This 177-nucleotide RNA was probed chemically with 2A3 and DMS.
For 2A3, 4,964 sequencing reads were counted.
DMS adducts were read by reverse transcription with MarathonRT.
RNA sequence: GGGAACGACUCGAGUAGAGUCGAAAAGAGCCUUGGUUCGCCAAGGCUCAAAUAAAUUCAGGUGAUUUGCUACCUUUAAGUGCAGCUAGUAAUUCAAAGGAAAAAGGCACAAGUUCGCUUGUGCCAACAGAUUAUAUUCGUUCGCGAAUAUAAUCUGAAAAGAAACAACAACAACAAC
Reactivity to 2A3 in 0.01 (KOAc 150mM, MgCl2 10mM, bicine 150mM(pH8.5), 24C), signal-to-noise 4, nucleotides 027 to 126: g000a000g000c000c000u020u010g040g040u070u070c140g030c060c000a000a000g010g000c000u020c000a010a000a000u000a000a010a020u150u110c040a000g000g020u020g060a190u120u070u110g010c010u000a020c030c000u100u190u250a030a020g030u030g010c020a010g000c020u060a030g050u120a090a100u190u140c100a140a030a080g010g070a100a050a050a060a080g000g010c000a000c000a000a020g010u050u070c170g020c120u000u000g000u000g000c000c000a000a010
Reactivity to DMS in 0.01 (KOAc 150mM, MgCl2 10mM, bicine 150mM(pH8.5), 24C), signal-to-noise 4, nucleotides 027 to 126: g000a010g000c000c010u000u000g000g010u000u000c240g010c010c010a010a000g000g020c010u000c000a000a040a060u000a070a080a110u010u000c090a020g010g000u000g000a110u000u010u010g000c010u000a010c030c000u000u000u010a020a030g010u000g010c050a020g010c280u000a060g000u000a030a060u000u000c080a070a070a130g000g000a040a040a080a090a130g020g000c000a010c000a010a010g000u010u010c230g020c010u000u000g010u000g000c010c000a020a050